The record gives the reactivity of an RNA of 177 nucleotides to DMS and 2A3. DMS adducts were read by reverse transcription with MarathonRT. 2A3 adducts were read by reverse transcription with SuperScript II with manganese. The RNA was probed in 150 mM KOAc, 10 mM MgCl2 and 150 mM bicine (pH 8.5) at 24 C.

RNA sequence: GGGAACGACUCGAGUAGAGUCGAAAACGCCGCGGAUCACUGGCGUCCAGCGGAGAAACAGGAGCUCGUCUCCUUCCUUUCGCUGCUGGCUCCACAUCCGGUCGUCGCUGAAGACUCCUUCCUUUCGCCAUUGGAAAUACUUCGGUAUUUCCAAUGGAAAAGAAACAACAACAACAAC
Reactivity to DMS in 0.01 (KOAc 150mM, MgCl2 10mM, bicine 150mM(pH8.5), 24C), signal-to-noise 2, nucleotides 027 to 126: c040g020c050c020g010c040g010g030a010u000c020a050c090u000g000g010c060g000u000c000c000a010g010c020g010g000a050g000a000a010a010c190a010g020g010a010g020c040u000c300g000u030c000u000c000c000u000u000c040c030u000u000u000c010g010c010u010g020c000u020g000g000c020u000c000c000a030c110a060u000c030c010g020g000u010c030g020u000c020g020c050u000g010a100a230g000a130c090u000c020c060u000u010c050c010u000u000u020c180g000
Reactivity to 2A3 in 0.01 (KOAc 150mM, MgCl2 10mM, bicine 150mM(pH8.5), 24C), signal-to-noise 3, nucleotides 027 to 126: c020g000c020c020g090c000g030g000a010u010c000a020c060u020g000g000c000g030u050c010c020a000g000c000g030g030a030g020a050a020a080c300a110g030g010a000g000c070u100c300g280u150c200u020c010c000u000u040c010c000u000u010u020c030g000c010u010g010c000u010g000g000c000u000c000c000a030c020a010u010c010c000g020g140u080c030g010u020c030g020c090u070g040a070a010g040a070c030u020c020c030u070u070c020c020u070u080u080c110g010
The 2A3 profile rests on 3,916 reads.